[RMDB]
RNA sequence: GGGAACGACUCGAGUAGAGUCGAAAAGAAAGAUGGCAGUAAAUUUGUGUCUAUACUCUGUCACUUUACUUUUGGCCUCAAGUCAUUGCAGUAAAGUGGCAGAGUAUAGACACAAAUUUAGGCCUAACAGUUUUGACGAUUUCGAUCGUCAAAACUGAAAAGAAACAACAACAACAAC
Reactivity to DMS in 0.01 (KOAc 150mM, MgCl2 10mM, bicine 150mM(pH8.5), 24C), signal-to-noise 1, nucleotides 027 to 126: g010a190a090a100g000a110u010g000g010c010a060g000u000a000a010a000u000u010u010g020u000g000u040c000u000a000u000a000c000u000c000u020g010u010c000a010c000u000u000u000a000c000u000u030u000u000g030g010c000c060u100c280a100a300g010u000c000a010u010u010g020c240a020g030u000a000a000a000g000u020g000g000c000a000g020a000g000u010a000u000a000g000a000c000a000c000a000a000a000u000u010u000a010g010g000c000c000u000a060a060

Chemical mapping of a 177-nucleotide RNA with DMS. Values cover nucleotides 27 to 126. Source: RMDB library RFM100, as collected in RNAgym. For DMS the reverse transcriptase was MarathonRT. The reactions ran in a buffer of 150 mM KOAc, 10 mM MgCl2 and 150 mM bicine (pH 8.5), at 24 C.